The record gives the reactivity of an RNA of 177 nucleotides to 2A3 and DMS.
Values are in units of 0.01, from 0 to 300, in steps of 10.

[RMDB]
RNA sequence: GGGAACGACUCGAGUAGAGUCGAAAAAUUUGAGCCUCUCCCAAUUCUCUAGUAGCCUCACUGGGCCAGGCAGCACUCAAUAUACCUCUUCACCACUGGCAUGAUUUCUGAUCACAUUUGGUGUCACCCUUAGUAUAGGGUUCGCCCUAUACUAAGGAAAAGAAACAACAACAACAAC
Reactivity to 2A3 in 0.01 (KOAc 150mM, MgCl2 10mM, bicine 150mM(pH8.5), 24C), signal-to-noise 4, nucleotides 027 to 126: a000u120u040u120g040a020g020c020c010u010c010u000c000c000c010a010a070u140u030c040u010c010u020a070g030u080a030g060c020c010u060c030a070c070u060g020g020g000c010c010a010g020g000c020a010g000c020a010c020u050c030a100a000u100a010u040a180c000c020u050c020u060u070c020a020c050c000a010c010u020g000g000c050a050u040g020a070u060u140u070c070u120g050a050u050c020a010c020a090u050u030u130g070g000u030g040u020c030a090c000
Reactivity to DMS in 0.01 (KOAc 150mM, MgCl2 10mM, bicine 150mM(pH8.5), 24C), signal-to-noise 5, nucleotides 027 to 126: a080u010u000u010g000a120g020c090c020u000c070u000c010c010c010a090a160u000u000c030u020c050u000a070g000u000a120g020c040c020u000c080a070c090u000g010g010g010c050c040a030g000g010c060a070g010c070a070c050u000c040a080a070u010a110u010a080c060c040u000c060u000u000c040a060c040c040a080c120u000g010g000c060a060u010g000a090u000u000u000c090u010g000a060u000c050a020c060a080u000u000u010g020g030u010g000u000c090a120c160